[RMDB]
RNA sequence: GGGAACGACUCGAGUAGAGUCGAAAAAUAGCGAGCGUACAUCUCACUCAGACUGUACGACAGUCUGACUCUCUAGUACUACAGGCUCCUGAGAGAGAGAGAGCGUUCACAGGAGCCUGUAAUUUAAUGCAAAGAGUAAUUUCGAUUACUCUUUGCAAAAAGAAACAACAACAACAAC
Reactivity to 2A3 in 0.01 (KOAc 150mM, MgCl2 10mM, bicine 150mM(pH8.5), 24C), signal-to-noise 2, nucleotides 027 to 126: a000u110a030g050c030g030a020g020c000g030u030a020c020a120u050c020u010c020a030c020u020c010a000g000a010c000u010g020u170a100c100g110a090c090a000g020u000c000u000g010a030c010u010c000u000c000u040a060g070u080a060c030u000a000c010a000g020g010c000u010c000c000u050g030a070g000a000g000a000g010a010g000a010g010a100g040c020g030u020u020c040a020c000a010g010g010a010g000c000c000u010g000u010a000a000u000u000u010a010a000
Reactivity to DMS in 0.01 (KOAc 150mM, MgCl2 10mM, bicine 150mM(pH8.5), 24C), signal-to-noise 4, nucleotides 027 to 126: a080u000a080g030c040g000a030g000c050g030u010a070c060a170u000c010u000c030a120c210u010c030a020g010a020c010u010g020u000a130c280g020a150c010a000g000u000c000u010g010a070c100u000c000u000c020u000a150g020u010a090c110u000a020c020a000g010g000c000u000c010c000u000g000a050g000a050g000a090g000a120g010a080g010a120g000c020g000u010u000c020a220c010a020g000g000a000g000c000c010u000g000u000a000a020u010u010u000a090a130
Source information: Chemical mapping of a 177-nucleotide RNA with 2A3 and DMS. For DMS the reverse transcriptase was MarathonRT. The RNA was probed in 150 mM KOAc, 10 mM MgCl2 and 150 mM bicine (pH 8.5) at 24 C. The DMS profile rests on 3,179 reads. Reactivities are rounded to 0.1 and cut off at 0 and 3. It was measured as part of the RMDB library M2PK90.